[RMDB]
Structure probing data (2A3 and DMS) for a 177-nucleotide construct.
Conditions: 150 mM KOAc, 10 mM MgCl2 and 150 mM bicine (pH 8.5), 24 C.
In probing experiments dimethyl sulfate is read out at A N1 and C N3, which are open when not base-paired.

RNA sequence: GGGAACGACUCGAGUAGAGUCGAAAAGAUAUGGAUUGCACAAGGGCUUUGAUCGUGUGAAUCGGAAACGAUUCCACGGGAGCCUGUGCAAUCCUAAGUCAAAGCCUACGUGUUCGCACGUAGGCAAGACCAUGGUCUACUUCGGUAGACCAUGGUCAAAAGAAACAACAACAACAAC
Reactivity to 2A3 in 0.01 (KOAc 150mM, MgCl2 10mM, bicine 150mM(pH8.5), 24C), signal-to-noise 2, nucleotides 027 to 126: g000a000u010a000u050g010g010a010u000u010g000c020a000c060a300a300g300g030g000c050u300u300u040g020a010u000c000g020u000g050u120g010a000a000u010c010g000g000a000a000a000c000g000a000u000u000c000c000a000c000g000g020g000a000g020c000c010u000g030u000g000c000a000a000u030c010c000u000a000a000g020u010c000a000a150a050g000c010c000u000a010c000g020u030g090u050u170c300g000c180a000c020g000u000a000g000g000c000a000a010
Reactivity to DMS in 0.01 (KOAc 150mM, MgCl2 10mM, bicine 150mM(pH8.5), 24C), signal-to-noise 1, nucleotides 027 to 126: g000a020u000a000u010g000g000a020u000u000g020c000a000c020a100a210g050g000g010c010u000u000u040g000a020u000c000g030u000g000u020g010a000a010u000c000g000g000a000a010a000c000g000a020u000u010c000c000a010c000g000g000g000a000g050c010c020u000g000u000g010c000a000a000u000c000c000u000a000a050g000u000c020a170a090a250g000c000c000u000a000c020g030u000g010u020u020c250g000c010a000c000g000u000a010g010g030c000a000a030